[RMDB]
RNA sequence: GGGAACGACUCGAGUAGAGUCGAAAACGAGGAUCUCGCGAAGGAGAUCGGCGUCGCGCACGGCGAGCAAGUGAAGGUGUCGUCCAACCGCGGGCACAUCGUCGCGGUCGCGCUCGUCACCAAGCGAAGCUAUCACUCGCUUCGGCGAGUGAUAGCUAAAAGAAACAACAACAACAAC
Reactivity to 2A3 in 0.01 (KOAc 150mM, MgCl2 10mM, bicine 150mM(pH8.5), 24C), signal-to-noise 2, nucleotides 027 to 126: c080g010a080g000g090a020u040c000u000c020g070c190g170a110a040g180g000a020g000a020u030c020g050g050c020g030u050c030g030c010g000c010a020c060g000g000c000g000a000g010c060a150a070g010u030g060a050a020g000g030u010g000u060c130g000u000c040c010a080a060c070c080g110c200g090g040g010c020a010c000a030u070c030g040u010c010g010c030g030g070u160c090g000c060g000c080u020c000g000u000c010a000c040c030a070a030g030c020g050a010
Reactivity to DMS in 0.01 (KOAc 150mM, MgCl2 10mM, bicine 150mM(pH8.5), 24C), signal-to-noise 3, nucleotides 027 to 126: c060g000a100g000g000a020u000c000u010c000g000c140g040a210a080g000g020a030g000a010u000c020g000g020c040g040u000c020g000c060g030c110a160c130g000g000c000g000a030g000c050a170a100g010u000g000a060a050g000g010u000g000u000c160g040u000c020c010a090a120c300c280g010c150g000g020g030c000a030c040a030u000c040g020u000c000g010c020g020g000u000c220g000c160g000c020u000c000g000u000c010a080c060c050a040a150g000c010g010a070